This 177-nucleotide RNA was probed chemically with DMS and 2A3. For DMS the reverse transcriptase was MarathonRT. The DMS profile rests on 1,142 reads. The reactions ran in a buffer of 150 mM KOAc, 10 mM MgCl2 and 150 mM bicine (pH 8.5), at 24 C. Source: RMDB library OK2TST, as collected in RNAgym. Reactivities are given for positions 27 through 126.
RNA sequence: GGGAACGACUCGAGUAGAGUCGAAAACUUUAUGAAGCAGACGGGAGUGAUUGCCCCUAAUCGUUCUUAACCCCAAUGCAACUAGAGAUGAUUCGCGCUCUCGAUGGCGAUACCCUUCGCUAUCAAGCAAUCCACAGCCAUUCGUGGCUGUGGAUUGAAAAGAAACAACAACAACAAC
Reactivity to DMS in 0.01 (KOAc 150mM, MgCl2 10mM, bicine 150mM(pH8.5), 24C), signal-to-noise 2, nucleotides 027 to 126: c020u010u000u020a060u000g020a070a260g000c060a050g030a280c300g010g000g000a140g040u020g000a030u000u000g000c050c000c020c030u000a020a050u000c020g010u000u030c090u010u000a100a160c030c000c020c040a050a190u020g010c050a030a120c060u000a090g000a030g000a140u000g000a130u000u000c040g010c100g000c060u000c070u020c110g000a010u020g000g020c010g000a020u010a110c100c050c030u000u020c010g020c000u010a010u000c030a040a020g000
Reactivity to 2A3 in 0.01 (KOAc 150mM, MgCl2 10mM, bicine 150mM(pH8.5), 24C), signal-to-noise 1, nucleotides 027 to 126: c020u040u050u040a190u280g060a090a000g040c000a000g020a100c110g040g000g010a120g090u100g040a140u060u180g090c000c000c000c000u050a100a020u060c030g060u120u010c040u040u180a090a100c010c010c000c020a000a030u060g020c000a020a030c020u040a060g010a020g070a180u130g020a030u110u050c040g000c000g040c100u000c000u000c040g000a010u020g020g030c020g000a040u080a120c000c000c000u000u010c000g000c000u020a010u000c000a010a010g040